[RMDB]
RNA sequence: GGGAACGACUCGAGUAGAGUCGAAAACAAAAGGGAUGGACUGUAGUGGAUCUUUUGAUGAUAGCCAGAGAAGCUAGGAUUAGAAAUACAUUGGUAAAAACUCUAGCUCAAGGAGACAACCAGGUGGCACGGUACAUCAAUUCGUUGAUGUACCGUGAAAAGAAACAACAACAACAAC
Reactivity to DMS in 0.01 (KOAc 150mM, MgCl2 10mM, bicine 150mM(pH8.5), 24C), signal-to-noise 4, nucleotides 027 to 126: c090a060a060a090a070g000g020g020a030u020g000g000a070c050u000g020u030a110g020u000g010g000a050u010c020u000u000u000u010g000a080u020g010a110u010a090g010c040c040a060g010a150g000a100a040g000c000u000a010g020g000a050u000u020a060g010a040a070a090u010a040c060a150u020u020g030g000u020a070a070a040a060a070c040u000c000u000a020g030c010u010c080a080a080g020g010a100g000a080c080a040a100c060c020a050g000g010u000g000g010
Reactivity to 2A3 in 0.01 (KOAc 150mM, MgCl2 10mM, bicine 150mM(pH8.5), 24C), signal-to-noise 4, nucleotides 027 to 126: c060a010a090a020a030g090g040g000a030u040g010g030a020c040u060g010u110a030g050u010g030g020a030u000c010u020u120u050u080g070a110u020g010a010u060a030g020c020c000a030g030a010g000a130a000g030c020u020a000g000g040a050u090u060a050g140a060a060a000u140a060c060a120u050u140g090g010u110a050a070a020a080a100c010u020c030u030a010g050c010u010c030a040a070g030g010a020g030a030c040a040a050c040c010a000g020g050u050g030g000
Chemical mapping of a 177-nucleotide RNA with DMS and 2A3.
The reactions ran in a buffer of 150 mM KOAc, 10 mM MgCl2 and 150 mM bicine (pH 8.5), at 24 C.
It was measured as part of the RMDB library OK1LIB.